[RMDB]
Background:
Conditions: 150 mM KOAc, 10 mM MgCl2 and 150 mM bicine (pH 8.5), 24 C. This 177-nucleotide RNA was probed chemically with DMS. The DMS profile rests on 999 reads. Values cover nucleotides 27 to 126. In probing experiments dimethyl sulfate is read out at A N1 and C N3, which are open when not base-paired. It was measured as part of the RMDB library 15KREP.
RNA sequence: GGGAACGACUCGAGUAGAGUCGAAAAUUGCUGACGUAGUAAAGGAACAAGUCUCAGACUUGCUUGUUAAAUUACUGCGUGGAAUGCCGAUUCCAGAUUUUGAUUUAGACGAUUUUAUUGACGCACCGGCAUGACAUUACUUCGGUAAUGUCAUGCCAAAAGAAACAACAACAACAAC
Reactivity to DMS in 0.01 (KOAc 150mM, MgCl2 10mM, bicine 150mM(pH8.5), 24C), signal-to-noise 2, nucleotides 027 to 126: u000u020g010c040u000g010a080c010g020u000a000g000u000a000a020a120g030g010a020a010c000a010a010g020u010c130u000c210a160g000a080c160u010u000g000c020u000u000g010u000u000a020a040a090u000u000a000c010u000g020c000g020u000g000g010a050a030u000g010c040c080g000a120u010u000c050c000a110g000a160u000u020u010u010g010a120u000u000u000a080g000a130c100g000a050u000u000u000u010a120u010u000g000a120c130g000c130a070c250c120